[RMDB]
Chemical mapping of a 177-nucleotide RNA with DMS and 2A3.

RNA sequence: GGGAACGACUCGAGUAGAGUCGAAAACGGCGGUUGCCGCCGAGCGCGAGCGUGCUGCGGCACCACGGUGUUGGCAAGCCCGCGCCGUCAGCUGGAUGUGGCAGGCAUUGGCCGCGACCCUAGUCGCCGGCCUCCGUCAGUUCGCUGACGGAGGCCGAAAAGAAACAACAACAACAAC
Reactivity to DMS in 0.01 (KOAc 150mM, MgCl2 10mM, bicine 150mM(pH8.5), 24C), signal-to-noise 2, nucleotides 027 to 126: c060g020g020c000g020g010u020u010g000c010c010g000c000c040g020a110g010c000g010c050g000a090g000c030g020u000g010c040u010g010c130g000g000c020a010c000c050a100c210g020g000u010g010u020u000g020g010c050a070a120g000c020c010c010g020c020g010c020c020g010u000c060a110g030c110u000g010g010a050u000g040u010g030g040c030a130g020g000c110a110u000u000g000g000c020c010g010c020g010a090c030c070c070u000a150g000u000c080g000c110
Reactivity to 2A3 in 0.01 (KOAc 150mM, MgCl2 10mM, bicine 150mM(pH8.5), 24C), signal-to-noise 2, nucleotides 027 to 126: c020g030g020c030g050g100u150u100g030c030c020g000c000c000g070a050g010c010g000c000g030a050g030c080g000u040g020c030u030g000c050g000g000c010a010c020c010a010c150g050g020u060g000u110u100g180g000c080a100a020g030c000c030c000g000c010g020c020c000g040u070c050a080g010c040u110g130g070a210u140g080u180g120g000c080a130g000g000c050a080u000u170g120g000c000c020g000c030g070a070c050c010c000u040a060g130u080c080g010c120